The record gives the reactivity of an RNA of 177 nucleotides to DMS.
The data come from the RNA Mapping Database (RMDB), library 15KREP.
The DMS profile rests on 1,292 reads.
Conditions: 150 mM KOAc, 10 mM MgCl2 and 150 mM bicine (pH 8.5), 24 C.
[RMDB]
RNA sequence: GGGAACGACUCGAGUAGAGUCGAAAACACACCCCCAGUCGGCGGGCCGGCUACUCUUCUUUUCCUUUCCUCGUCCUCCCCGGUCAGCCUCCAGAGUUCCUCUUCUUCUUCCUUGCUGAGGCUCUUUGUAUAGAAAUAUGUUCGCAUAUUUCUAUACAAAAGAAACAACAACAACAAC
Reactivity to DMS in 0.01 (KOAc 150mM, MgCl2 10mM, bicine 150mM(pH8.5), 24C), signal-to-noise 1, nucleotides 027 to 126: c100a120c170a260c050c010c010c020c020a080g030u000c090g000g000c050g020g020g010c030c030g020g000c070u000a040c040u000c040u010u010c020u000u010u010u000c010c000u010u020u010c030c010u010c040g010u000c020c020u000c010c020c020c020g030g020u000c090a050g010c030c010u020c040c060a050g000a170g010u000u010c020c010u000c020u000u020c020u000u000c030u000u000c000c010u000u010g020c070u000g000a100g020g030c080u000c030u000u000u000